Structure probing data (DMS and 2A3) for a 207-nucleotide construct.
Source: RMDB library OK3TST, as collected in RNAgym.
The 2A3 profile rests on 9,287 reads.
RNA sequence: GGGAACGACUCGAGUAGAGUCGAAAAGGGACAGUUACAGCAGAGUUGGUUAAAACCAAUGUGAGAUCAGAGGAGGGACACCUGACCCAGAAGAUGGGGUCAGGGAAGACUCAUGUAGAGUCCAAAAGAAUGCGCUGGAGAGAGACAGAGAGUAGCAGUAUCAUUACUCAUUCGUGAGUAAUGAUACAAAAGAAACAACAACAACAAC
Reactivity to DMS in 0.01 (KOAc 150mM, MgCl2 10mM, bicine 150mM(pH8.5), 24C), signal-to-noise 3, nucleotides 027 to 156: g000g030g040a080c040a110g020u000u000a110c050a080g030c020a150g010a160g010u000u000g010g020u000u020a100a110a110a140c040c040a050a110u010g020u000g000a140g020a100u000c040a070g010a120g050g020a070g040g010g000a080c040a050c020c000u000g000a020c000c000c010a130g010a050a170g020a210u010g010g000g020g020u000c000a010g000g010g020a080a030g010a050c020u000c010a090u010g030u000a150g000a040g030u000c020c020a000a070a070a070g010a070a100u000g030c080g030c030u010g000g000a100g000a120g020a080g030a060c040a110g010a060g000a090g000u000a090g010c050a170
Reactivity to 2A3 in 0.01 (KOAc 150mM, MgCl2 10mM, bicine 150mM(pH8.5), 24C), signal-to-noise 6, nucleotides 027 to 156: g030g010g000a010c030a040g020u090u110a050c040a030g040c030a020g030a020g100u030u040g020g030u070u130a060a090a040a050c010c010a050a020u100g040u060g030a080g010a070u100c070a030g020a030g070g020a020g000g000g010a010c020a020c030c000u000g010a000c000c000c020a050g090a170a030g070a100u230g050g000g000g000u000c000a000g000g000g000a010a010g000a000c000u000c010a300u300g060u120a030g000a000g020u000c010c000a000a080a000a030g050a040a050u070g020c050g000c050u040g020g000a020g000a000g000a000g000a020c020a040g050a010g010a010g040u070a030g020c070a010